[RMDB]
This 177-nucleotide RNA was probed chemically with 2A3.
It was measured as part of the RMDB library OK1LIB.
The RNA was probed in 150 mM KOAc, 10 mM MgCl2 and 150 mM bicine (pH 8.5) at 24 C.
2A3 adducts were read by reverse transcription with SuperScript II with manganese.

RNA sequence: GGGAACGACUCGAGUAGAGUCGAAAAUUCGACGGACGAUUUCAACGUGCUGCGCGACGGAUGGUUCGAACGGCUGAACCAUCAUCUGGCGCUCGGCGGGAUCGAUCUUCGGAUUGAUGGCCGCUCUGGUGCACCAUACGUUCGCGUAUGGUGCACCAAAAGAAACAACAACAACAAC
Reactivity to 2A3 in 0.01 (KOAc 150mM, MgCl2 10mM, bicine 150mM(pH8.5), 24C), signal-to-noise 2, nucleotides 027 to 126: u020u010c000g010a000c080g040g000a000c040g050a070u000u070u090c090a090a000c080g080u050g100c100u120g000c020g000c000g030a040c030g080g010a010u000g050g000u020u010c070g020a170a200c140g220g070c200u220g000a000a010c030c000a020u040c020a040u080c080u030g100g000c010g000c020u010c030g000g000c010g000g000g000a000u010c010g210a220u000c000u010u000c040g030g010a000u000u000g060a060u090g110g070c000c010g020c000u050c050u060